[RMDB]
RNA sequence: GGGAACGACUCGAGUAGAGUCGAAAAUUUUCUUACAUGGCAUGAGAUGUAAGAAAACUAACAGUUAGAUUUAAACAGAUGGAGAUACACAAAUGUUUGAAUCCCAGUAACAAAAAUCCUGGUAUCUCCUCAACAUAUUGUUCGCAAUAUGUUGAGGAAAAGAAACAACAACAACAAC
Reactivity to 2A3 in 0.01 (KOAc 150mM, MgCl2 10mM, bicine 150mM(pH8.5), 24C), signal-to-noise 1, nucleotides 027 to 126: u010u000u000u020c000u020u000a030c000a010u030g160g000c090a060u170g130a140g000a180u000g020u000a000a030g000a040a010a010a010c020u010a000a030c000a020g110u230u140a040g060a070u050u020u080a010a010a000c020a010g040a060u020g000g040a160g030a130u130a080c030a010c010a040a010a110u040g000u010u000u000g010a000a010u040c060c030c000a020g050u040a010a020c040a040a140a000a000a010u050c010c000u070g060g040u020a060u000c010u000

Chemical mapping of a 177-nucleotide RNA with 2A3. Conditions: 150 mM KOAc, 10 mM MgCl2 and 150 mM bicine (pH 8.5), 24 C. The data come from the RNA Mapping Database (RMDB), library RFMREP.